[RMDB]
RNA sequence: GGGAACGACUCGAGUAGAGUCGAAAAGUCAUAGGGUAAUUCAAACAGAGAUAAUUUUGUAUAUUCUAGAAUAUUAUGUUUUCAAACGUAGGUUUUGAUGUACCAUAAGAUUUCUUCUGCCAUUGAGGCGAUAUAUAUGUGUGUGUGUGUGUGUGUAGACUAGUACGAUGUUCGCAUCGUACUAGUCAAAAGAAACAACAACAACAAC
Reactivity to 2A3 in 0.01 (KOAc 150mM, MgCl2 10mM, bicine 150mM(pH8.5), 24C), signal-to-noise 1, nucleotides 027 to 156: g020u010c050a080u130a000g010g010g030u060a140a070u090u080c040a040a150a170c080a070g020a000g040a070u120a190a150u110u300u250u030g020u060a090u030a030u010u080c060u080a010g020a000a010u040a100u060u000a030u010g020u090u300u000u000c000a030a000a020c070g070u070a110g060g040u010u000u070u010g000a000u000g040u100a040c040c000a010u000a030a000g000a010u010u040u060c050u110u010c020u060g010c000c050a080u060u150g040a160g040g000c070g000a010u010a010u010a000u000a050u090g090u010g000u000g010u020g040u010g000u010g000u000g000u000g000u020g020u020a000